[RMDB]
RNA sequence: GGGAACGACUCGAGUAGAGUCGAAAAGGGGUCCAGGUGCAAGGGGUUCGCUUGGAUUUAUAGGCUGAAGCCUCCACGGCCUAUUGUCAGCGAACAUUGAUGACCACCUGGACGGAGGCACCCAAAACCGUUUGACUUGUUCGCAAGUCAAACGGAAGAAAUUGCCUCUGUUCGCAGAGGCAAUUUCAAAAGAAACAACAACAACAAC
Reactivity to 2A3 in 0.01 (KOAc 150mM, MgCl2 10mM, bicine 150mM(pH8.5), 24C), signal-to-noise 2, nucleotides 027 to 156: g000g050g010g020u000c010c000a000g000g030u030g030c110a120a260g060g000g080g110u010u010c070g000c010u090u100g160g000a030u130u300u110a050u030a010g000g000c000u020g020a120a060g040c010c010u000c010c000a000c000g000g010c000c010u030a010u000u040g030u040c080a000g000c000g020a010a010c030a040u050u300g130a130u120g070a060c010c040a030c000c000u000g000g000a000c000g000g000a000g000g000c000a060c000c000c000a010a070a000a040c020c010g000u000u000u000g000a020c020u020u010g050u150u180c300g020c160a010a000g000u000c010a000a000a000c000g000g010a020a000